[RMDB]
RNA sequence: GGGAACGACUCGAGUAGAGUCGAAAACUGGACUACGUCGCGGUUGACUACGGCGGUGCGGUGGACGAUGGCAAGGUGCUCAAUGGAUCCGAAUAUGCGGAGAUGCAGGAGUUUGCGGCCACAGCGGAGCGCCAACUGGGAGAGUUGCCUCAGGGUCCCUUAGUGUAGGGUUCGCCCUACACUAAGGAAAAGAAACAACAACAACAAC
Reactivity to 2A3 in 0.01 (KOAc 150mM, MgCl2 10mM, bicine 150mM(pH8.5), 24C), signal-to-noise 1, nucleotides 027 to 156: c050u050g010g040a030c070u050a050c100g080u020c020g020c070g080g040u100u090g050a040c050u100a020c110g020g010c050g080g030u080g040c040g010g040u040g020g050a040c040g060a090u080g000g050c000a060a020g050g000u040g020c000u010c020a060a150u020g040g030a030u010c020c020g030a070a140u220a100u220g120c080g020g020a030g000a030u110g050c020a070g020g080a030g030u080u120u140g000c010g040g000c020c010a010c010a060g060c120g020g060a010g070c000g000c020c000a000a010c000u010g010g050g000a070g000a000g010u000u030g000c000c020u040c020a030g030g020g010u080c010
This 207-nucleotide RNA was probed chemically with 2A3.